[RMDB]
RNA sequence: GGGAACGACUCGAGUAGAGUCGAAAAUUUGAAGGAUCUGCCAAGCUCACUUUUAAUCAUGAGAAAGAAAUUACCCACAUGGAGUCAGCAGAAAAUGAGAAAGUAGAGCUCGUGCUGCGAAUAAUUCCGAAUGAGUAGUGUUCGCACUACUCAUUCGAAAAGAAACAACAACAACAAC
Reactivity to DMS in 0.01 (KOAc 150mM, MgCl2 10mM, bicine 150mM(pH8.5), 24C), signal-to-noise 3, nucleotides 027 to 126: u010u010u050g000a120a160g000g050a110u010c030u020g000c070c050a140a040g000c010u000c000a050c000u000u000u000u010a070a140u020c020a030u000g010a090g030a060a080a070g000a050a110a070u010u020a120c060c010c040a130c210a080u020g000g020a070g020u000c060a080g000c110a110g000a030a030a100a050u000g000a040g010a000a010a060g000u020a120g020a040g010c000u000c050g010u010g020c030u000g000c010g000a050a050u010a100a120u000u000c040
Reactivity to 2A3 in 0.01 (KOAc 150mM, MgCl2 10mM, bicine 150mM(pH8.5), 24C), signal-to-noise 4, nucleotides 027 to 126: u120u040u070g070a070a030g030g040a050u040c030u060g000c000c010a020a000g000c000u010c000a010c000u060u100u040u070a140a070u060c040a020u060g060a050g140a090a120a010g130a010a190a010u080u110a100c020c010c030a070c030a100u160g000g030a040g060u040c030a030g040c040a020g080a060a080a050a030u050g000a030g010a010a000a050g000u060a080g020a030g010c010u000c020g070u190g020c030u000g010c040g000a050a030u180a080a080u130u000c020